[RMDB]
Conditions: 150 mM KOAc, 10 mM MgCl2 and 150 mM bicine (pH 8.5), 24 C. An RNA of 177 nucleotides, treated with DMS and read out base by base. Values cover nucleotides 27 to 126. Values are in units of 0.01, from 0 to 300, in steps of 10. For DMS, 3,722 sequencing reads were counted.
RNA sequence: GGGAACGACUCGAGUAGAGUCGAAAAGAUAUGGAGGCGCUUGCUGGAGCUCUAUCGGUCGUUUGACGUUUAUCGGAAACGAUAAACCGAGACCGUAGAGCUAUGAAGGCAAGCGCCUCCUAAGUCACCAUACGUAAUAGUUCGCUAUUACGUAUGGAAAAGAAACAACAACAACAAC
Reactivity to DMS in 0.01 (KOAc 150mM, MgCl2 10mM, bicine 150mM(pH8.5), 24C), signal-to-noise 3, nucleotides 027 to 126: g000a040u000a300u000g000g020a020g000g010c010g040c010u000u000g010c010u010g010g000a030g000c000u000c000u000a010u020c020g050g010u000c000g020u010u010u000g020a240c300g000u010u010u000a000u000c000g010g010a130a080a210c000g000a020u000a000a010a020c000c010g010a120g000a010c000c000g030u000a000g000a010g010c010u000a020u010g000a170a190g000g010c000a010a010g010c010g010c020c000u000c000c000u000a000a080g010u000c030a260